[RMDB]
RNA sequence: GGGAACGACUCGAGUAGAGUCGAAAAGCGAUCAAUAAUAAGUCGACGACUCGAAAGAGUCUCAUGGAAACAUGCAUACUAAUGCGUCCAAUGUAGGUCGACGAUUAGGACGCAGAAGAUCGCGAAAACUGCUACCUGAUUUCGAUCAGGUAGCAGUAAAAGAAACAACAACAACAAC
Reactivity to 2A3 in 0.01 (KOAc 150mM, MgCl2 10mM, bicine 150mM(pH8.5), 24C), signal-to-noise 3, nucleotides 027 to 126: g020c000g030a010u040c040a010a040u160a260a000u110a190a040g010u010c000g000a000c000g000a010c000u000c000g030a090a060a120g000a000g010u020c000u000c000a020u050g000g030a030a080a020c020a010u030g020c020a050u100a200c020u100a130a070u070g000c000g010u000c000c000a020a050u120g050u110a070g050g080u040c060g040a070c000g020a010u000u000a020g020g000a000c000g000c000a000g020a030a020g000a000u020c020g000c000g010a000a000a000
Reactivity to DMS in 0.01 (KOAc 150mM, MgCl2 10mM, bicine 150mM(pH8.5), 24C), signal-to-noise 2, nucleotides 027 to 126: g000c000g000a040u000c010a230a120u050a130a060u060a070a190g000u010c030g030a120c030g000a030c000u000c010g010a160a190a160g000a030g000u010c000u010c010a020u010g000g000a200a060a220c050a020u040g010c030a030u020a090c110u000a100a170u000g000c020g000u000c010c000a070a000u000g000u040a070g050g010u020c000g020a080c000g010a060u000u000a110g010g000a040c030g000c010a010g000a090a110g010a060u000c040g000c000g010a080a100a050